RNA sequence: GGGAACGACUCGAGUAGAGUCGAAAAUGGGCUUCGGCCCAACUUCACCGUAGGGUCAUUCAAGUCGCCCAAACUGUGAACGGAGUUUCGAAAGAGACUCCGGGAGUUUGGGACCCGACUUGGUGACCCUAAACGGAUUUGUAGCCUUCGGGCUAAAAGUAAAUUGUCUAUUCGUAGACAAUUUACUAAAAGAAACAACAACAACAAC
Reactivity to DMS in 0.01 (KOAc 150mM, MgCl2 10mM, bicine 150mM(pH8.5), 24C), signal-to-noise 1, nucleotides 027 to 156: u000g000g020g030c000u000u010c190g000g020c000c020c010a000a020c060u000u010c040a090c050c020g000u000a050g000g010g090u000c000a050u000u000c000a010a030g010u000c000g000c010c000c000a030a010a010c030u010g000u000g010a220a300c020g010g000a030g000u000u000u020c000g010a260a190a300g010a050g010a020c000u000c010c020g030g000g000a050g010u000u010u030g000g020g000a060c090c160c080g010a020c000u000u010g020g020u010g000a020c000c000c000u000a000a000a010c010g000g000a140u000u000u000g000u000a070g030c000c020u000u000c300g050g000g050c010u010a020a050a160
Reactivity to 2A3 in 0.01 (KOAc 150mM, MgCl2 10mM, bicine 150mM(pH8.5), 24C), signal-to-noise 2, nucleotides 027 to 156: u020g010g000g010c020u070u070c300g140g000c010c000c000a000a000c010u070u040c080a060c070c000g000u030a060g000g000g000u000c000a030u300u300c010a030a010g020u000c020g050c000c000c010a020a010a000c140u150g020u060g300a070a010c000g000g010a010g000u000u000u000c030g030a080a090a060g000a020g010a000c030u030c000c000g000g010g000a020g000u000u000u060g000g020g000a000c020c100c000g010a000c000u000u000g000g000u000g000a000c030c000c000u010a010a020a010c000g000g030a020u100u070u300g100u050a000g010c010c000u060u100c210g050g010g000c030u070a120a130a010